[RMDB]
This 177-nucleotide RNA was probed chemically with 2A3 and DMS. The data come from the RNA Mapping Database (RMDB), library OK2TRN. For DMS the reverse transcriptase was MarathonRT. The 2A3 profile rests on 1,403 reads. Values cover nucleotides 27 to 126. For 2A3 the reverse transcriptase was SuperScript II with manganese.
RNA sequence: GGGAACGACUCGAGUAGAGUCGAAAACGGUUACGGAAGUCAAGCGCCUCACCGGGCUCGAUGUUUCCUAUGAGGAUGCCUUCGAUAUUCUGAAGCGCCUUGGCUUUGGCGUGGAAGGUGACGGCAACGUACCGUCCGGAUUCGUCCGGACGGUACGAAAAGAAACAACAACAACAAC
Reactivity to 2A3 in 0.01 (KOAc 150mM, MgCl2 10mM, bicine 150mM(pH8.5), 24C), signal-to-noise 1, nucleotides 027 to 126: c020g020g030u060u070a030c060g050g040a070a000g070u040c020a050a040g050c000g040c080c000u010c000a020c010c000g010g050g000c050u040c040g020a050u110g050u000u090u000c000c000u050a190u190g170a090g070g030a050u050g010c020c000u040u070c040g060a060u040a200u300u080c010u030g020a020a000g000c010g020c000c000u020u090g150g040c000u170u110u010g020g000c020g000u030g000g050a010a020g040g050u050g020a000c040g020g000c010a060a020
Reactivity to DMS in 0.01 (KOAc 150mM, MgCl2 10mM, bicine 150mM(pH8.5), 24C), signal-to-noise 2, nucleotides 027 to 126: c120g000g000u000u010a080c150g010g000a070a050g010u010c110a040a120g010c220g030c010c010u000c160a060c090c090g010g000g030c130u000c100g010a040u000g020u020u000u000c000c010u040a170u000g020a070g010g000a140u000g010c010c030u000u010c030g020a100u010a090u000u000c010u000g000a300a120g010c010g010c050c080u000u000g020g010c090u000u000u000g010g040c020g020u000g010g000a180a030g000g040u010g010a050c080g020g010c040a060a160